[RMDB]
RNA sequence: GGGAACGACUCGAGUAGAGUCGAAAAAUCCUGGAUUUCAGAAUGGCUAAUGCUGUCUCGUUCAACCUACUUGUCGAGUUAUCUGUGGGUGCCGACUUGACAGGGUCUGGGAUCAGAGGAAUGAUCACCAGGAUACGGUUUUCGAACCGUAUCCUGGAAAAGAAACAACAACAACAAC
Reactivity to DMS in 0.01 (KOAc 150mM, MgCl2 10mM, bicine 150mM(pH8.5), 24C), signal-to-noise 2, nucleotides 027 to 126: a070u000c000c000u000g000g000a040u000u000u000c020a020g010a120a110u020g020g020c120u000a090a100u020g010c010u010g000u010c020u000c050g010u000u000c040a300a030c030c020u000a010c020u000u000g000u000c090g000a120g020u010u000a090u000c100u000g010u000g020g000g030u000g000c230c220g000a010c030u000u000g010a040c000a020g000g000g000u010c010u000g030g000g000a000u000c020a010g000a060g020g010a070a070u010g000a160u010c160a190
Reactivity to 2A3 in 0.01 (KOAc 150mM, MgCl2 10mM, bicine 150mM(pH8.5), 24C), signal-to-noise 2, nucleotides 027 to 126: a020u040c010c000u020g020g030a030u000u050u000c060a050g040a110a080u190g200g000c140u270a110a100u160g090c000u020g000u000c000u020c000g020u070u050c030a040a010c030c000u010a000c020u080u100g100u120c120g090a110g270u220u160a110u120c040u040g000u040g010g000g000u030g100c050c040g010a000c000u000u060g000a000c010a000g000g030g000u010c020u000g010g000g000a010u000c020a030g210a020g190g060a080a110u130g000a130u120c040a000
Chemical mapping of a 177-nucleotide RNA with DMS and 2A3. For DMS, 1,216 sequencing reads were counted. For 2A3 the reverse transcriptase was SuperScript II with manganese. DMS adducts were read by reverse transcription with MarathonRT. Conditions: 150 mM KOAc, 10 mM MgCl2 and 150 mM bicine (pH 8.5), 24 C. The 2A3 profile rests on 1,022 reads.